[RMDB]
The record gives the reactivity of an RNA of 207 nucleotides to 2A3. Values cover nucleotides 27 to 156. The 2A3 profile rests on 7,312 reads. The RNA was probed in 150 mM KOAc, 10 mM MgCl2 and 150 mM bicine (pH 8.5) at 24 C.

RNA sequence: GGGAACGACUCGAGUAGAGUCGAAAAGGGGUCGAUCUCAUCGAUCGACUUCCUGCAUCGAUCGAUACUGAAGCCUCCACGGUAUCGGGAGCAGAAGUCGGGAGAGAUCGACGGAGGCACCCAAAGUCCAAUCACGUGUUCGCACGUGAUUGGACAACCAUUAGUUAGCCUUCGGGCUAACUAAUGGAAAAGAAACAACAACAACAAC
Reactivity to 2A3 in 0.01 (KOAc 150mM, MgCl2 10mM, bicine 150mM(pH8.5), 24C), signal-to-noise 4, nucleotides 027 to 156: g050g020g080g020u020c000g000a000u000c000u010c010a120u300c020g000a000u010c000g000a000c000u020u010c080c050u030g000c020a090u300c030g000a010u010c000g000a000u000a010c000u040g050a090a030g030c010c000u010c000c000a000c010g000g010u010a000u000c000g010g000g010a020g000c000a000g000a000a000g010u010c000g010g000g010a040g010a000g000a010u000c000g000a000c000g000g010a000g000g000c000a030c000c010c010a070a090a010g010u010c010c000a000a000u000c000a000c030g020u030g060u100u100c280g060c130a010c000g000u000g010a000u000u000g000g010a000c000a000a010